[RMDB]
RNA sequence: GGGAACGACUCGAGUAGAGUCGAAAAGAUCAAGCAGGAGCUCAUCUGCAAGUGGAUCGAGCCGGAGCAGCUGGCGAAUCCCAAGUUCUCGUGCAACAAGAGAAUCAGCACGAUGCACGAGCUCGUGGGCUUUCGAUUGGUUCGCCAAUCGAAGGCCAAAAGAAACAACAACAACAAC
Reactivity to DMS in 0.01 (KOAc 150mM, MgCl2 10mM, bicine 150mM(pH8.5), 24C), signal-to-noise 7, nucleotides 027 to 126: g010a060u020c040a100a170g010c000a040g010g010a170g020c070u010c100a090u020c050u000g010c060a160a110g020u040g020g010a020u000c070g010a100g010c020c010g000g020a260g030c120a100g020c020u010g000g010c030g010a100a110u010c000c000c010a140a130g000u010u010c020u000c000g000u000g010c040a050a070c140a070a210g000a120g000a120a050u020c100a090g020c050a060c170g020a090u010g030c010a030c050g000a020g010c130u020c040g020u040g010
Reactivity to 2A3 in 0.01 (KOAc 150mM, MgCl2 10mM, bicine 150mM(pH8.5), 24C), signal-to-noise 8, nucleotides 027 to 126: g030a040u060c060a070a030g000c020a010g040g090a030g050c040u040c060a100u040c040u020g040c070a050a070g240u210g120g020a010u030c070g020a010g000c010c000g000g020a090g060c100a020g080c030u030g020g000c020g010a020a070u040c000c000c000a010a010g030u000u000c000u000c000g010u020g010c030a070a060c000a180a050g140a010g010a030a040u160c050a020g070c030a010c050g050a030u040g020c010a000c040g010a010g010c010u030c040g120u180g040
The record gives the reactivity of an RNA of 177 nucleotides to DMS and 2A3. Values cover nucleotides 27 to 126. For 2A3, 13,257 sequencing reads were counted. The RNA was probed in 150 mM KOAc, 10 mM MgCl2 and 150 mM bicine (pH 8.5) at 24 C. The data come from the RNA Mapping Database (RMDB), library OK1LIB.